[RMDB]
RNA sequence: GGGAACGACUCGAGUAGAGUCGAAAACUCCAUUUCGAUGGAGGAUACACCUUUGUGUUACUACCAACCAGCAAGGUUAUGGGAUCCCAUUGGGAUCCCUAAGACUGAUGACCUGGUUACUUAGUAACACUCUGGUACACCGGCUUUUCGAAGCCAAAUUGAUAUAAGAAUUCGUUCUUAUAUCAAUAAAAGAAACAACAACAACAAC
Reactivity to 2A3 in 0.01 (KOAc 150mM, MgCl2 10mM, bicine 150mM(pH8.5), 24C), signal-to-noise 4, nucleotides 027 to 156: c000u000c000c000a010u050u100u150c270g120a020u000g000g010a000g030g020a040u100a130c110a010c010c000u000u010u010g000u000g000u010u000a000c000u010a000c000c070a010a000c000c000a000g000c010a090a130g000g010u010u020a020u110g010g000g000a000u010c000c010c090a100u200u300g010g000g010a000u000c050c000c000u000a090a020g010a000c000u010g050a200u110g020a050c020c010u000g010g000u010u010a020c010u020u030a000g000u000a000a000c000a000c000u000c000u010g000g030u040a030c040a050c040c110g000g040c020u110u080u060u130c210g100a010a010g000c010c010a070a200
Reactivity to DMS in 0.01 (KOAc 150mM, MgCl2 10mM, bicine 150mM(pH8.5), 24C), signal-to-noise 2, nucleotides 027 to 156: c000u000c010c010a020u000u000u020c190g020a030u020g030g000a010g010g010a140u000a090c110a070c000c010u000u000u030g010u000g020u000u010a000c010u000a020c110c020a020a040c010c010a000g010c030a090a170g020g000u010u000a300u010g010g020g010a010u010c010c000c000a300u000u000g090g060g000a000u000c000c020c000u000a000a060g000a040c000u000g010a110u010g010a090c300c010u000g020g010u000u000a060c000u000u000a040g020u010a000a040c010a020c000u000c010u010g010g020u000a090c060a180c060c060g010g010c020u000u000u000u010c140g030a050a020g000c010c020a010a090